[RMDB]
RNA sequence: GGGAACGACUCGAGUAGAGUCGAAAAGAUAUGGAGGUUCUCGGGAGCUGGAGAGUGUCGGAAACGACAUGGUCAGCGAGGAUCGAGGAACCUCCUAAGUCAAAACCAGACUCUUCGGAGUCUGGAAUCCUUCUAUGAGGUUCGCCUCAUAGAAGGAAAAAGAAACAACAACAACAAC
Reactivity to 2A3 in 0.01 (KOAc 150mM, MgCl2 10mM, bicine 150mM(pH8.5), 24C), signal-to-noise 2, nucleotides 027 to 126: g020a020u050a050u140g000g010a000g000g020u010u000c000u000c000g020g000g000a030g000c020u010g040g030a110g040a050g100u030g010u010c020g010g030a030a060a040c000g000a010c000a020u050g010g080u250c000a000g000c000g020a280g000g010a010u010c000g030a060g080g080a020a030c000c010u000c000c010u010a000a000g010u010c030a010a020a050a130c000c000a000g010a020c000u000c000u050u170c300g180g010a000g000u010c000u010g000g010a010a040
Reactivity to DMS in 0.01 (KOAc 150mM, MgCl2 10mM, bicine 150mM(pH8.5), 24C), signal-to-noise 4, nucleotides 027 to 126: g000a030u010a300u010g010g010a010g010g020u000u000c010u000c000g000g000g010a030g030c000u000g000g000a060g010a180g030u000g000u000c000g010g000a090a070a160c010g010a010c000a030u000g010g000u020c000a020g010c000g010a060g010g000a030u000c010g010a040g010g010a020a030c010c000u000c000c010u000a000a060g000u000c030a130a100a150a130c000c000a000g000a030c000u000c000u010u010c210g030g020a020g010u010c000u010g000g000a010a040
Background
Structure probing data (2A3 and DMS) for a 177-nucleotide construct. It was measured as part of the RMDB library TTRDEL. DMS adducts were read by reverse transcription with MarathonRT. The reactions ran in a buffer of 150 mM KOAc, 10 mM MgCl2 and 150 mM bicine (pH 8.5), at 24 C.